[RMDB]
RNA sequence: GGGAACGACUCGAGUAGAGUCGAAAAGAUGCUUGAGCACCGAGUGGUUAGAAGCUACUCGUCAUCUGACGUCCCAAGUCUAUUGGAGCUCCACACUGAAAUGGGAAACUGCGUCGUGUGCAGUGCACUGUAUUUCUUAUUUCGAUAAGAAAUACAGAAAAGAAACAACAACAACAAC
Reactivity to 2A3 in 0.01 (KOAc 150mM, MgCl2 10mM, bicine 150mM(pH8.5), 24C), signal-to-noise 9, nucleotides 027 to 126: g020a000u050g010c070u180u190g070a030g030c030a030c080c010g010a010g000u020g030g040u100u050a080g060a300a020g070c000u010a010c000u000c010g040u020c010a020u000c020u020g030a040c040g050u030c000c000c000a010a010g070u010c050u080a160u070u150g060g010a030g010c000u000c020c010a040c000a010c030u140g030a060a080a090u090g020g010g040a070a110a040c020u030g000c000g030u050c020g030u040g040u050g040c020a020g030u030g040c040a010
Reactivity to DMS in 0.01 (KOAc 150mM, MgCl2 10mM, bicine 150mM(pH8.5), 24C), signal-to-noise 9, nucleotides 027 to 126: g010a030u000g010c140u010u010g010a100g020c080a140c190c010g000a020g010u000g010g010u000u000a150g010a140a220g000c000u000a010c000u000c000g010u010c020a020u000c040u000g010a110c210g010u000c010c000c000a100a130g010u010c060u000a120u000u000g010g010a140g010c020u000c040c040a030c050a040c060u010g000a030a060a050u000g000g000g000a120a090a110c040u000g010c300g000u000c080g010u000g010u000g010c070a060g010u000g010c120a180

The record gives the reactivity of an RNA of 177 nucleotides to 2A3 and DMS. The RNA was probed in 150 mM KOAc, 10 mM MgCl2 and 150 mM bicine (pH 8.5) at 24 C. High 2A3 reactivity points to a flexible backbone, as in loops and unpaired stretches. It was measured as part of the RMDB library OK2TST.